Background
Structure probing data (DMS and 2A3) for a 177-nucleotide construct. For DMS, 1,723 sequencing reads were counted. The RNA was probed in 150 mM KOAc, 10 mM MgCl2 and 150 mM bicine (pH 8.5) at 24 C. The data come from the RNA Mapping Database (RMDB), library OK2TRN. 2A3 adducts were read by reverse transcription with SuperScript II with manganese. DMS adducts were read by reverse transcription with MarathonRT.
RNA sequence: GGGAACGACUCGAGUAGAGUCGAAAAGUCGGCUACAAAUCGGUCAGUUGACGGUGAAAGUGCAGCCGCUGGCGAAACCGUCAGAAGACGAGUUGCAUCAGGCGAUGCUUAAUGGCAUCCGUGAUAAUGCACCUAAACUGUUCGCAGUUUAGGUGCAAAAAGAAACAACAACAACAAC
Reactivity to DMS in 0.01 (KOAc 150mM, MgCl2 10mM, bicine 150mM(pH8.5), 24C), signal-to-noise 2, nucleotides 027 to 126: g030u000c020g000g020c020u000a150c010a040a120a090u000c030g000g000u010c030a160g040u000u000g030a020c000g000g010u000g030a040a080a170g020u000g010c050a160g000c050c030g010c090u020g000g010c040g000a100a120a070c070c000g000u000c040a010g020a140a100g000a100c050g010a060g030u000u000g030c080a040u010c020a070g010g010c130g000a010u000g010c010u010u010a090a160u010g000g010c000a050u000c020c050g000u010g000a090u000a120a190
Reactivity to 2A3 in 0.01 (KOAc 150mM, MgCl2 10mM, bicine 150mM(pH8.5), 24C), signal-to-noise 1, nucleotides 027 to 126: g030u020c000g000g000c000u130a040c060a020a130a090u090c040g080g070u010c070a060g050u080u030g010a000c040g020g070u090g060a230a190a030g250u120g090c000a010g000c070c060g030c130u090g000g010c000g060a220a000a000c090c000g000u000c000a000g010a050a020g020a040c000g030a020g090u070u060g010c000a010u040c080a000g220g000c050g040a000u010g000c010u060u300a270a030u220g040g030c010a020u000c000c050g020u010g060a040u050a220a120